RNA sequence: GGGAACGACUCGAGUAGAGUCGAAAACAGAUUGAGUUCGCUCAAUCUGAAAUAUAAGCUCACCAAAAGUCCAAAACCAGAGCAAGGACAGAAAAUAAAUAAAAACCAUGGUCUUCGGACCAUGGAAGAGUAAGAGAAGGUUCGCCUUCUCUUACUCAAAAGAAACAACAACAACAAC
Reactivity to DMS in 0.01 (KOAc 150mM, MgCl2 10mM, bicine 150mM(pH8.5), 24C), signal-to-noise 2, nucleotides 027 to 126: c000a010g000a000u000u000g000a000g000u000u020c240g000c000u000c000a010a000u000c000u000g000a050a090a050u010a100u010a090a130g000c030u000c020a130c200c130a050a110a070a120g010u010c000c000a060a100a090a110c060c040a050g030a040g000c010a120a180g020g000a020c010a110g010a080a040a110a110u030a050a080a150u010a070a030a160a180a100c010c020a000u000g010g000u000c000u000u010c220g030g000a020c000c000a000u020g010g000a000a010

Chemical mapping of a 177-nucleotide RNA with DMS. The RNA was probed in 150 mM KOAc, 10 mM MgCl2 and 150 mM bicine (pH 8.5) at 24 C. Values cover nucleotides 27 to 126.